Record summary: The record gives the reactivity of an RNA of 177 nucleotides to 2A3 and DMS. It was measured as part of the RMDB library OK2TST. For 2A3 the reverse transcriptase was SuperScript II with manganese. Conditions: 150 mM KOAc, 10 mM MgCl2 and 150 mM bicine (pH 8.5), 24 C. The DMS profile rests on 18,650 reads.

RNA sequence: GGGAACGACUCGAGUAGAGUCGAAAACGUCGUAGCCAAGGCCGAGGCUGAGGCGCGCGAGCGGGCAAAGGCCGAGGCCAAGGAUUCAUUGCAGGCAGCAACCUUCGCAGCCACCAUCGCCGGCGGCACCUCUACAGUAAUUCGUUACUGUAGAGGUAAAAGAAACAACAACAACAAC
Reactivity to 2A3 in 0.01 (KOAc 150mM, MgCl2 10mM, bicine 150mM(pH8.5), 24C), signal-to-noise 5, nucleotides 027 to 126: c030g050u040c040g080u120a040g060c010c010a030a030g010g000c000c010g000a020g020g000c040u070g020a050g110g020c030g000c010g000c040g050a050g030c040g000g110g120c000a160a140a040g000g000c000c000g000a000g060g000c000c000a000a000g000g000a000u070u080c040a030u040u160g050c050a040g060g000c010a020g020c010a070a090c020c020u110u130c080g010c040a020g030c010c010a030c010c010a060u090c050g030c090c020g020g020c000g020g000c010
Reactivity to DMS in 0.01 (KOAc 150mM, MgCl2 10mM, bicine 150mM(pH8.5), 24C), signal-to-noise 9, nucleotides 027 to 126: c100g010u010c070g010u000a100g020c010c010a060a300g010g010c000c000g010a300g000g010c010u000g010a300g000g000c010g010c020g000c300g010a180g010c020g000g010g000c030a030a090a190g000g010c010c010g000a300g000g010c010c020a020a200g000g000a100u000u000c070a090u010u000g010c050a090g010g010c040a070g010c040a070a090c080c060u000u010c090g020c060a090g010c020c020a060c050c040a060u000c110g010c090c060g000g010c030g000g010c090